RNA sequence: GGGAACGACUCGAGUAGAGUCGAAAAGCCACGGGGGUACGCCGCUACGUUGCUUUCACUUGGUACGCUCGUAUAGUAUAGAGCUAAAAGUAAACAUAGAUCCAUGUGAUGUGACGUAGUGGUACCCGGUACCAGGUGAGUUCGCUCACCUGGUACCAAAAGAAACAACAACAACAAC
Reactivity to 2A3 in 0.01 (KOAc 150mM, MgCl2 10mM, bicine 150mM(pH8.5), 24C), signal-to-noise 1, nucleotides 027 to 126: g040c040c020a040c030g070g000g000g000g030u030a030c070g010c000c000g000c000u000a010c000g000u000u010g000c010u070u190u110c000a000c010u000u000g040g000u070a010c050g010c000u000c010g100u040a020u070a140g170u060a060u050a140g010a020g000c010u010a000a000a100a120g140u100a020a250a000c040a090u280a080g130a080u050c000c000a020u020g000u030g000a000u010g020u000g000a000c000g000u000a000g000u000g000g000u010a000c000c000c000

Chemical mapping of a 177-nucleotide RNA with 2A3. It was measured as part of the RMDB library RFMREP. For 2A3 the reverse transcriptase was SuperScript II with manganese. The reactions ran in a buffer of 150 mM KOAc, 10 mM MgCl2 and 150 mM bicine (pH 8.5), at 24 C. 2A3 is a SHAPE reagent: it acylates the 2'-hydroxyl of flexible nucleotides of all four kinds.